[RMDB]
RNA sequence: GGGAACGACUCGAGUAGAGUCGAAAAUUCUUUGAUACCACCCCAGAGCAAUAUCUGCCCCUCGCCCAAUCGUUGCACCAGCUGAUACUGGCUCCAGCCUUAUCCCAAAACCUGAUACCAGAAAAUGAACAAUGUCCAGAUUCGUCUGGACAUUGUUAAAAGAAACAACAACAACAAC
Reactivity to DMS in 0.01 (KOAc 150mM, MgCl2 10mM, bicine 150mM(pH8.5), 24C), signal-to-noise 2, nucleotides 027 to 126: u000u000c060u000u000u010g010a150u030a130c080c050a110c050c040c030c040a100g000a160g020c030a050a090u010a080u010c040u000g010c010c010c040c000u000c050g000c040c000c030a040a100u000c080g000u000u000g000c060a050c090c000a050g000c080u000g010a090u010a080c060u000g000g010c060u010c050c030a050g010c040c000u020u000a100u000c000c000c000a080a060a060a070c100c050u010g010a100u000a120c090c040a080g000a100a080a090a060u020g000
This 177-nucleotide RNA was probed chemically with DMS. It was measured as part of the RMDB library OK2TST. Values cover nucleotides 27 to 126. Reactivities are rounded to 0.1 and cut off at 0 and 3. For DMS the reverse transcriptase was MarathonRT.